Chemical mapping of a 177-nucleotide RNA with DMS and 2A3. For DMS, 42,742 sequencing reads were counted. The 2A3 profile rests on 45,872 reads. Reactivities are rounded to 0.1 and cut off at 0 and 3. 2A3 adducts were read by reverse transcription with SuperScript II with manganese. The RNA was probed in 150 mM KOAc, 10 mM MgCl2 and 150 mM bicine (pH 8.5) at 24 C. It was measured as part of the RMDB library OK1LIB.
RNA sequence: GGGAACGACUCGAGUAGAGUCGAAAACAUGGCAGCACAAACAGUAGCAGCAGUAGCGGCAUUGGGAGUGGCGGUGGGACCACACGCCUCACCCUGAUCCCGCCCACACAGCUGCCGGGUGUGGGUGGAUGAGUUUUAAUUUCGAUUAAAACUCAUCAAAAGAAACAACAACAACAAC
Reactivity to DMS in 0.01 (KOAc 150mM, MgCl2 10mM, bicine 150mM(pH8.5), 24C), signal-to-noise 9, nucleotides 027 to 126: c100a060u020g000g010c000a010g010c020a120c160a070a190a170c120a070g010u010a090g020c020a030g010c020a160g010u030a080g020c020g000g010c040a100u010u010g010g000g000a280g020u000g000g000c060g010g040u000g000g010g010a100c090c040a030c060a080c050g000c010c000u010c030a040c010c000c020u010g000a080u020c060c010c010g000c000c000c000a010c000a000c010a080g000c000u000g000c000c000g000g000g010u000g020u000g010g000g020u000g010
Reactivity to 2A3 in 0.01 (KOAc 150mM, MgCl2 10mM, bicine 150mM(pH8.5), 24C), signal-to-noise 9, nucleotides 027 to 126: c060a050u080g020g000c010a010g030c030a030c050a100a190a030c060a110g120u180a030g020c040a000g000c020a030g060u180a030g030c030g040g000c030a040u050u110g020g000g010a110g030u030g010g020c050g030g010u040g020g070g080a080c140c010a020c030a020c060g020c000c010u030c040a100c010c000c010u010g020a050u040c010c000c010g000c000c000c000a010c000a000c000a010g000c000u010g000c000c010g010g020g000u000g000u000g000g010g010u020g050